An RNA of 207 nucleotides, treated with 2A3 and read out base by base. 2A3 adducts were read by reverse transcription with SuperScript II with manganese. The RNA was probed in 150 mM KOAc, 10 mM MgCl2 and 150 mM bicine (pH 8.5) at 24 C.
RNA sequence: GGGAACGACUCGAGUAGAGUCGAAAAUCAUGCUGCUGAUAAAGACAUACCUGAGACUGGGAAGAAAAAGAGGCUUAAUUGGACUUACAGUUCCACAUGGCUGGGGAGGCCUCAGAAUCAUGGUGGGAAGCAAAAGGCACUUCUUACAUGGCGGUGACCACGCUGGAUUAUUCGUAAUCCAGCGUGGAAAAGAAACAACAACAACAAC
Reactivity to 2A3 in 0.01 (KOAc 150mM, MgCl2 10mM, bicine 150mM(pH8.5), 24C), signal-to-noise 1, nucleotides 027 to 156: u100c030a050u130g010c010u010g000c010u030g050a020u050a070a060a010g120a070c070a020u180a140c010c040u020g050a050g020a060c040u020g020g070g000a050a030g020a040a100a000a000a000g040a000g000g000c060u050u090a020a030u180u090g060g000a030c020u020u020a060c220a080g020u100u000c050c000a000c010a090u080g030g000c000u030g000g000g000g060a010g020g120c010c030u010c020a000g030a000a020u110c030a040u100g050g000u020g000g000g010a000a000g000c000a060a060a020a000g060g000c060a020c030u050u070c000u070u090a050c020a050u050g060g000c000g080g010u070g020a040